[RMDB]
RNA sequence: GGGAACGACUCGAGUAGAGUCGAAAACUUAGGACUUAGUUUACCACUAGACUCAAAGCAAUUUCUUGAUUUUCCUCUAAUACUAGCAGCACUAGAGGGCAUGACUAGUACCAAAUAACAGAAGUUACAUGCGUUUUGGAUUCGUCCAAAACGCAUGAAAAGAAACAACAACAACAAC
Reactivity to 2A3 in 0.01 (KOAc 150mM, MgCl2 10mM, bicine 150mM(pH8.5), 24C), signal-to-noise 1, nucleotides 027 to 126: c030u090u090a030g070g030a040c020u020u000a000g050u040u060u060a150c040c040a040c010u010a010g020a050c010u030c160a120a040a000g000c010a000a050u000u170u000c010u030u170g040a130u110u070u010u000c000c050u000c050u100a200a050u010a130c020u020a000g000c040a000g000c000a040c080u050a010g020a240g060g080g000c050a140u060g090a140c000u000a040g060u000a020c010c030a100a020a140u070a050a010c040a080g220a300a030g040u080u080a040
Reactivity to DMS in 0.01 (KOAc 150mM, MgCl2 10mM, bicine 150mM(pH8.5), 24C), signal-to-noise 1, nucleotides 027 to 126: c050u000u010a080g090g010a070c030u020u000a020g020u000u000u000a170c100c190a120c020u000a020g010a230c140u000c030a100a090a040g040c080a080a030u000u000u000c020u000u030g030a160u000u000u000u000c000c020u000c040u010a090a130u000a050c030u000a080g010c020a060g000c040a120c020u000a060g010a080g000g010g000c020a020u000g020a060c030u000a000g020u010a060c230c120a010a110a090u000a080a040c100a130g000a220a110g000u020u030a080

An RNA of 177 nucleotides, treated with 2A3 and DMS and read out base by base. For 2A3 the reverse transcriptase was SuperScript II with manganese. For 2A3, 559 sequencing reads were counted. It was measured as part of the RMDB library OK2TRN.